[RMDB]
RNA sequence: GGGAACGACUCGAGUAGAGUCGAAAAGAUAUGGACGAUGCGUGCAACAGCUGUUCGGUCGGAAACGACCGACAGACAUGCAUACAUCGUCCUAAGUCAAAUCCGGUAGUGUUCGCACUACCGGAAAGCGGUGUAACAGGUUCGCCUGUUACACCGCAAAAGAAACAACAACAACAAC
Reactivity to 2A3 in 0.01 (KOAc 150mM, MgCl2 10mM, bicine 150mM(pH8.5), 24C), signal-to-noise 1, nucleotides 027 to 126: g020a020u000a000u040g020g000a030c010g050a040u000g000c040g080u030g050c300a300a230c100a300g000c040u000g130u300u240c000g000g000u000c010g020g030a000a010a000c010g000a000c000c010g010a020c000a000g000a000c020a250u300g000c000a000u000a000c000a000u000c000g000u000c000c000u000a000a000g010u000c010a010a030a190u000c000c010g000g010u030a000g000u000g040u100u080c250g080c120a000c000u000a010c060c000g030g000a010a000a000

An RNA of 177 nucleotides, treated with 2A3 and read out base by base.